[RMDB]
RNA sequence: GGGAACGACUCGAGUAGAGUCGAAAAGGUGAUGAGUUGAUGAGCGCAUUGAGCGAGCGUAUCAGUGAGAACACCGAACGCAAAAUGGGCUUGGUUAUCGACGAGAAUCUCAUCGACGAAGUACACGCAGGGUACCUGGAUUCGUCCAGGUACCCUGAAAAGAAACAACAACAACAAC
Reactivity to DMS in 0.01 (KOAc 150mM, MgCl2 10mM, bicine 150mM(pH8.5), 24C), signal-to-noise 3, nucleotides 027 to 126: g010g030u000g000a080u010g000a270g030u010u000g000a030u010g000a040g010c100g020c050a090u000u000g000a260g020c040g020a170g000c000g010u000a120u000c080a110g000u010g020a190g040a150a100c050a050c060c010g000a020a020c020g030c010a090a030a070a070u000g010g010g000c010u010u000g000g020u000u010a150u030c090g030a200c060g010a140g000a120a140u000c030u000c000a020u010c030g020a040c060g000a080a090g000u010a060c050a070c080g000
Reactivity to 2A3 in 0.01 (KOAc 150mM, MgCl2 10mM, bicine 150mM(pH8.5), 24C), signal-to-noise 2, nucleotides 027 to 126: g120g010u030g010a030u030g000a070g040u040u010g020a020u020g000a010g000c030g000c100a040u050u110g010a010g070c040g020a010g000c010g000u040a270u130c010a030g070u050g060a200g090a150a010c010a020c090c000g010a010a020c000g020c000a000a000a040a180u150g100g040g000c020u050u100g040g060u180u080a120u090c020g060a050c070g000a070g130a120a090u070c030u020c010a050u000c010g000a010c010g030a070a000g020u080a030c010a000c070g030